[RMDB]
RNA sequence: GGGAACGACUCGAGUAGAGUCGAAAAAAUAAUUGGCGAAACUCGUUUCGCGUUGGCUGCCUAAUUCAAGGAAUUAGCGUGCCUUCAUGCUAAGGGUUUGAUAUCUGGUAAAACCCGGUGCAUUCAUAAGACUUUUGCUUGUUCGCAAGCAAAAGAAGAUUCUUUCUUAGUUCGCUAAGAAAGAAUCAAAAGAAACAACAACAACAAC
Reactivity to 2A3 in 0.01 (KOAc 150mM, MgCl2 10mM, bicine 150mM(pH8.5), 24C), signal-to-noise 6, nucleotides 027 to 156: a010a010u280a020a040u090u070g030g000c000g000a040a020a020c030u030c050g030u000u010u010c020g010c020g010u010u030g010g010c040u080g020c060c000u010a010a000u010u020c130a270a150g160g030a060a010u000u000a000g030c040g060u040g000c020c000u000u020c030a020u020g000c000u020a010a030g010g000g020u010u030u010g040a050u070a130u250c220u280g070g020u060a000a030a000a010c010c000c000g000g010u010g000c010a000u030u110c030a030u060a220a120g070a140c000u000u010u000u010g000c000u010u010g030u050u080c140g010c110a000a000g000c000a000a000a000a000g000a000a010
Reactivity to DMS in 0.01 (KOAc 150mM, MgCl2 10mM, bicine 150mM(pH8.5), 24C), signal-to-noise 2, nucleotides 027 to 156: a090a110u000a030a100u000u000g000g010c010g010a180a090a050c020u000c120g020u000u000u000c010g040c040g030u000u000g010g020c040u000g000c080c000u000a040a050u000u000c000a210a150g020g010a120a050u000u000a030g010c020g020u000g010c030c000u000u000c040a050u000g010c010u000a300a290g010g020g020u000u020u010g000a220u000a100u000c110u030g000g030u000a100a030a020a060c010c010c000g000g020u000g010c010a040u000u000c070a120u010a090a110g000a140c020u000u000u020u000g020c010u000u000g030u010u010c300g020c000a030a020g000c020a000a000a000a030g000a080a140
Notes: Conditions: 150 mM KOAc, 10 mM MgCl2 and 150 mM bicine (pH 8.5), 24 C. The record gives the reactivity of an RNA of 207 nucleotides to 2A3 and DMS. 2A3 is a SHAPE reagent: it acylates the 2'-hydroxyl of flexible nucleotides of all four kinds. The DMS profile rests on 4,781 reads.